[RMDB]
RNA sequence: GGGAACGACUCGAGUAGAGUCGAAAAAAAACAAAGGAGGAAUGGACGAUGAAUAAUUAUAUGAAGACUUCAAACAAGGCAUUAUUGCGCUUAAAAAUAGAAUUUAUUUCACCGGACCAUUUCGCGACGCAUCUCCUCAUUUCGAUGAGGAGAUGCGAAAAGAAACAACAACAACAAC
Reactivity to 2A3 in 0.01 (KOAc 150mM, MgCl2 10mM, bicine 150mM(pH8.5), 24C), signal-to-noise 1, nucleotides 027 to 126: a000a000a000a000c110a000a010a010g050g000a030g000g000a000a060u000g000g090a000c010g000a000u000g000a000a000u000a070a010u090u160a080u000a080u170g040a120a070g070a250c010u200u080c150a010a010a010c130a000a000g000g020c000a010u000u050a210u280u180g000c090g230c030u000u030a000a000a080a040a000u080a000g110a000a120u000u270u000a060u050u250u000c000a000c020c020g090g000a030c010c020a000u010u010u010c010g000c000g000a000